[RMDB]
RNA sequence: GGGAACGACUCGAGUAGAGUCGAAAAUAACUAACAACUGUUUUCGUCCUUAAACCAACGAUAACGGCUGUUAGGCCAUGUUUUGUAAGGGCUGUUAGGAGCGCUGUUAAGGAGUGUUAACGGUGAGGACAUUGCUCCUGUUCGCAGGAGCAAUGUCAAAAGAAACAACAACAACAAC
Reactivity to 2A3 in 0.01 (KOAc 150mM, MgCl2 10mM, bicine 150mM(pH8.5), 24C), signal-to-noise 1, nucleotides 027 to 126: u070a010a050c000u020a000a000c020a010a020c030u020g010u010u030u000u020c020g030u000c020c000u120u200a120a080a100c030c010a000a030c030g020a040u040a030a010c000g060g000c010u000g010u050u000a030g000g020c040c000a190u150g050u060u120u040u060g070u090a080a080g050g010g030c000u040g080u090u060a050g030g100a080g010c030g000c030u050g000u040u020a110a030g000g110a010g180u100g000u080u020a050a010c000g030g050u030g020a030g020
Reactivity to DMS in 0.01 (KOAc 150mM, MgCl2 10mM, bicine 150mM(pH8.5), 24C), signal-to-noise 1, nucleotides 027 to 126: u000a080a250c020u000a020a000c020a020a010c010u000g040u000u010u000u000c000g000u000c120c100u000u010a080a150a190c300c300a100a040c000g020a000u000a020a000c020g000g010c020u020g010u000u000a030g030g000c070c020a050u000g010u030u000u000u000g000u000a070a090g000g000g010c040u000g010u000u000a120g010g020a090g000c060g010c060u000g000u000u000a070a020g040g010a010g020u010g010u000u000a000a060c060g040g020u030g010a110g010

This 177-nucleotide RNA was probed chemically with 2A3 and DMS. For 2A3, 1,049 sequencing reads were counted. The DMS profile rests on 843 reads.